[RMDB]
RNA sequence: GGGAACGACUCGAGUAGAGUCGAAAAAGGGUGUGGGCACACCUGUGCUGCUGAGCCCGCGUGCCCUUGCCGGUGGCCAGGCACACACACAGCUGUGCAUCCUUGGCCCAAGAUCAGCUGUGCCACAGCCUGGGGACAAAUUCGUUUGUCCCCAGGCAAAAGAAACAACAACAACAAC
Reactivity to DMS in 0.01 (KOAc 150mM, MgCl2 10mM, bicine 150mM(pH8.5), 24C), signal-to-noise 3, nucleotides 027 to 126: a050g000g010g040u010g020u000g020g020g020c020a090c020a060c150c090u000g010u010g020c110u000g000c130u010g000a120g000c010c020c110g000c140g030u060g010c020c020c020u010u010g000c030c060g020g010u000g000g000c040c060a100g000g010c150a060c040a060c060a060c020a080c110a050g010c140u000g010u000g010c080a130u000c000c030u000u000g010g000c000c010c030a050a070g010a090u000c120a080g030c090u000g000u000g000c050c030a070c160a150
Structure probing data (DMS) for a 177-nucleotide construct.